RNA sequence: GGGAACGACUCGAGUAGAGUCGAAAAACACGAACCCUGUGCAAUGGAGUGAGCACAGCAACAGUAUGUCACUUUCAUUGUUUCCUUCGCAAGUAAAUGGUCGUUCGUCGGAGGCAUCUAAUAGUCACAUGACGUGAUAGUUCGCUAUCACGUCAUGAAAAGAAACAACAACAACAAC
Reactivity to 2A3 in 0.01 (KOAc 150mM, MgCl2 10mM, bicine 150mM(pH8.5), 24C), signal-to-noise 8, nucleotides 027 to 126: a000c070a010c050g050a080a080c020c000c020u070g050u050g030c000a030a050u060g020g020a030g010u040g010a050g060c040a010c030a050g110c040a060a150c010a080g200u250a120u120g040u030c000a010c010u070u210u180c020a010u000u060g020u050u120u080c010c000u040u070c020g000c040a050a040g040u150a080a130a150u190g030g000u020c030g040u040u010c020g050u010c020g010g020a020g020g000c000a020u020c030u090a130a140u070a230g070u040c030a010
Reactivity to DMS in 0.01 (KOAc 150mM, MgCl2 10mM, bicine 150mM(pH8.5), 24C), signal-to-noise 4, nucleotides 027 to 126: a110c120a100c080g000a090a110c030c060c060u000g020u030g000c000a020a070u000g000g020a000g000u000g010a060g000c020a240c030a060g000c170a090a100c150a060g000u030a040u010g020u000c010a010c030u010u000u000c020a010u020u010g020u000u010u000c020c010u000u010c030g030c070a070a050g000u060a000a080a070u030g020g000u000c050g020u000u010c040g000u000c020g020g000a090g000g020c140a060u010c060u030a050a070u030a050g020u010c120a170